An RNA of 177 nucleotides, treated with 2A3 and read out base by base. Reactivities are given for positions 27 through 126. For 2A3 the reverse transcriptase was SuperScript II with manganese. Conditions: 150 mM KOAc, 10 mM MgCl2 and 150 mM bicine (pH 8.5), 24 C. For 2A3, 526 sequencing reads were counted. The data come from the RNA Mapping Database (RMDB), library OK1LIB.
RNA sequence: GGGAACGACUCGAGUAGAGUCGAAAACAACACACAUAUAACCCAAGGCCAAUAAAGAGGCUCUCUUGACAUUUUCUGGUUGUUCCGCACCUGUAUUGUCAACCAUAAUUUUCAUCAACUCUGGCCAGCCUCAUGCGUCGUUCGCGACGCAUGAGGCAAAAGAAACAACAACAACAAC
Reactivity to 2A3 in 0.01 (KOAc 150mM, MgCl2 10mM, bicine 150mM(pH8.5), 24C), signal-to-noise 2, nucleotides 027 to 126: c090a020a030c000a010c060a000c030a100u020a040u130a300a060c050c000c000a070a020g040g000c010c000a140a080u220a140a300a050g170a100g000g000c110u090c000u010c040u040u040g020a030c010a030u120u160u040u020c000u000g020g000u020u040g070u180u000c030c030g040c000a030c010c010u030g080u170a140u060u180g000u050c020a000a060c060c000a020u020a140a260u130u020u090u050c040a040u000c000a000a080c000u000c010u030g000g110c030c060a060